[RMDB]
RNA sequence: GGGAACGACUCGAGUAGAGUCGAAAAUCAGAUGAGACUAGUCAUCAGACUAGAUAGUAUCACACUACCGGUACAUAGUAGAGACAUACAUAGAUGGGUAUGACACAUCAGAGGCGCGGGCCACCGAGCAUUAGGCACGAUUCGUCGUGCCUAAUGCAAAAGAAACAACAACAACAAC
Reactivity to DMS in 0.01 (KOAc 150mM, MgCl2 10mM, bicine 150mM(pH8.5), 24C), signal-to-noise 4, nucleotides 027 to 126: u000c090a110g000a080u010g010a140g000a170c020u000a000g000u000c010a180u000c210a160g000a060c010u000a010g010a090u000a090g000u000a090u000c080a070c140a080c030u000a070c050c030g000g020u000a040c090a100u010a080g020u000a040g010a090g020a030c090a060u000a030c060a040u010a120g010a090u000g000g010g010u010a060u000g010a070c120a070c060a020u000c050a070g000a140g000g000c080g000c080g020g000g000c040c050a070c030c060g010a160
Reactivity to 2A3 in 0.01 (KOAc 150mM, MgCl2 10mM, bicine 150mM(pH8.5), 24C), signal-to-noise 2, nucleotides 027 to 126: u090c020a030g060a100u080g050a040g060a090c000u010a000g040u010c010a190u060c130a160g020a010c030u020a010g010a030u060a010g050u050a060u060c020a020c010a030c110u080a060c000c030g070g000u050a040c020a040u090a020g050u010a000g030a000g030a130c000a070u110a020c020a020u090a070g110a100u120g060g000g030u060a050u100g050a030c010a000c010a090u080c020a020g020a070g070g000c020g030c060g030g010g020c020c000a020c030c000g000a010
Overview: The record gives the reactivity of an RNA of 177 nucleotides to DMS and 2A3. The reactions ran in a buffer of 150 mM KOAc, 10 mM MgCl2 and 150 mM bicine (pH 8.5), at 24 C. Reactivities are rounded to 0.1 and cut off at 0 and 3. The 2A3 profile rests on 3,079 reads. For 2A3 the reverse transcriptase was SuperScript II with manganese. The DMS profile rests on 2,881 reads.